An RNA of 177 nucleotides, treated with 2A3 and DMS and read out base by base.
2A3 adducts were read by reverse transcription with SuperScript II with manganese.
[RMDB]
RNA sequence: GGGAACGACUCGAGUAGAGUCGAAAAUUGGCGUCGUGGAAGCGGGCUAUACAUUCGCAUCGAUGACGCAGGGCAUUUUUGAAUGGCGUGUCGAUGCCCGAAAUGCCAGCCUGACGGAUCAUGGUCAACUGCAUGACCGAUUCGUCGGUCAUGCAGUAAAAGAAACAACAACAACAAC
Reactivity to 2A3 in 0.01 (KOAc 150mM, MgCl2 10mM, bicine 150mM(pH8.5), 24C), signal-to-noise 2, nucleotides 027 to 126: u050u090g140g000c030g020u040c020g040u040g080g010a010a020g000c010g010g000g000c010u130a140u020a230c060a040u030u020c010g000c000a020u000c020g140a000u030g120a010c000g000c000a010g000g090g010c020a040u000u030u060u070u230g250a300a200u150g010g000c020g010u020g050u110c040g050a030u120g020c000c080c020g010a030a010a010u020g000c000c000a010g020c020c000u090g020a050c020g000g020a030u090c000a100u170g030g000u020c050a040
Reactivity to DMS in 0.01 (KOAc 150mM, MgCl2 10mM, bicine 150mM(pH8.5), 24C), signal-to-noise 2, nucleotides 027 to 126: u010u010g000g040c000g010u000c020g100u000g000g010a110a080g040c020g010g030g000c160u040a080u010a180c170a160u000u020c050g030c020a090u010c020g010a020u000g010a020c000g020c010a020g010g030g000c060a010u000u010u020u030u010g020a120a090u000g000g000c020g050u000g000u020c150g010a030u000g000c010c140c030g000a000a020a030u000g000c170c070a160g000c020c010u010g010a060c050g020g010a080u000c070a070u000g020g010u000c050a080
The RNA was probed in 150 mM KOAc, 10 mM MgCl2 and 150 mM bicine (pH 8.5) at 24 C. The DMS profile rests on 1,814 reads.